[RMDB]
Description:
This 177-nucleotide RNA was probed chemically with DMS and 2A3. The RNA was probed in 150 mM KOAc, 10 mM MgCl2 and 150 mM bicine (pH 8.5) at 24 C. In probing experiments dimethyl sulfate is read out at A N1 and C N3, which are open when not base-paired.
RNA sequence: GGGAACGACUCGAGUAGAGUCGAAAACCCGUUUUGUUCGCAAAACGGGACUCAUCUUUGCUUGGCAGCAUAGCACGUGUUGGCUGGACUGCUGGCUUAUCCUUGGAGGCAGUUUCGACUGCCUCAAGUAAACUGUACGCUUCGGCGUACAGUUUACAAAAGAAACAACAACAACAAC
Reactivity to DMS in 0.01 (KOAc 150mM, MgCl2 10mM, bicine 150mM(pH8.5), 24C), signal-to-noise 2, nucleotides 027 to 126: c000c000c000g000u010u000u000u000g010u000u020c240g000c010a010a000a000a000c010g020g000g000a100c140u000c130a110u010c110u010u020u010g010c010u000u000g050g010c000a010g020c080a150u000a020g010c000a040c090g020u020g030u010u010g010g030c010u010g000g000a170c020u000g000c000u010g000g010c000u000u000a050u000c100c040u000u030g010g010a040g000g000c000a010g010u000u000u010c170g000a020c010u010g000c000c000u000c010a010a060
Reactivity to 2A3 in 0.01 (KOAc 150mM, MgCl2 10mM, bicine 150mM(pH8.5), 24C), signal-to-noise 1, nucleotides 027 to 126: c000c000c000g010u000u000u030u000g080u030u020c160g030c110a010a010a020a000c000g010g000g030a060c000u040c030a220u100c080u040u070u110g000c000u060u210g030g030c030a010g080c000a070u070a080g020c020a040c200g270u300g040u190u300g130g000c010u030g000g070a150c000u010g010c000u000g020g000c000u030u050a190u110c040c010u040u140g160g010a010g000g000c000a000g000u040u040u240c150g060a020c000u070g000c000c030u000c000a000a000